[RMDB]
Chemical mapping of a 177-nucleotide RNA with 2A3 and DMS.
It was measured as part of the RMDB library OK2TRN.
The DMS profile rests on 1,670 reads.
The reactions ran in a buffer of 150 mM KOAc, 10 mM MgCl2 and 150 mM bicine (pH 8.5), at 24 C.
RNA sequence: GGGAACGACUCGAGUAGAGUCGAAAACUGGGAUGCUCACAGCCGGCAGCCCACACCUGGGGAGACUCUUCAGCAGAGCACCUUGCGGCCUUACUCCUGCACGUCUCCUGCAGUUUGUAAGGUGCAAGAUUAUCACGGCAUUCGUGCCGUGAUAAUCAAAAGAAACAACAACAACAAC
Reactivity to 2A3 in 0.01 (KOAc 150mM, MgCl2 10mM, bicine 150mM(pH8.5), 24C), signal-to-noise 1, nucleotides 027 to 126: c040u030g000g000g040a040u040g000c000u020c060a190c070a120g050c110c030g020g000c000a000g030c010c000c010a040c000a010c000c010u030g000g000g070g000a080g110a120c020u000c040u170u070c100a080g040c040a010g050a010g060c010a030c020c000u010u040g010c030g070g030c010c010u010u010a010c000u020c000c020u010g000c010a020c060g130u030c050u030c050c000u020g050c000a030g000u150u170u120g010u010a000a010g000g050u010g040c000a030a040
Reactivity to DMS in 0.01 (KOAc 150mM, MgCl2 10mM, bicine 150mM(pH8.5), 24C), signal-to-noise 2, nucleotides 027 to 126: c130u000g010g000g010a080u000g000c040u000c100a140c080a060g010c060c030g000g010c000a050g000c000c000c020a040c140a110c030c050u010g000g000g010g000a230g010a120c040u000c060u000u000c160a100g030c110a100g010a060g000c100a150c140c010u000u000g000c000g000g020c010c010u000u000a030c010u000c250c020u000g000c000a020c070g000u000c040u000c100c060u000g020c010a000g000u010u000u010g010u000a020a010g020g020u000g020c020a030a010